[RMDB]
RNA sequence: GGGAACGACUCGAGUAGAGUCGAAAAGAUAUGGACACGUCCAACUGUGCUUUGAUCUUAUUGACAAAUAACUCGGAAACGAGUUAUUUGUCAAUAAGGGAGCACAUUUGGAGCGUGUCCUAAGUCACUAAUAUCUCAGGUUCGCCUGAGAUAUUAGAAAAGAAACAACAACAACAAC
Reactivity to DMS in 0.01 (KOAc 150mM, MgCl2 10mM, bicine 150mM(pH8.5), 24C), signal-to-noise 4, nucleotides 027 to 126: g000a070u010a300u000g000g000a000c000a000c010g020u000c000c000a000a010c090u000g020u000g010c000u000u010u020g010a080u010c000u000u000a010u000u000g000a020c000a000a010a020u000a010a010c000u000c000g020g000a130a130a260c010g020a020g000u000u000a000u000u000u000g010u000c000a000a000u010a000a010g000g000g000a000g020c010a010c000a000u000u000u000g000g010a060g010c010g020u000g000u000c000c000u000a010a060g010u000c040a300

Overview
This 177-nucleotide RNA was probed chemically with DMS. For DMS the reverse transcriptase was MarathonRT. The RNA was probed in 150 mM KOAc, 10 mM MgCl2 and 150 mM bicine (pH 8.5) at 24 C.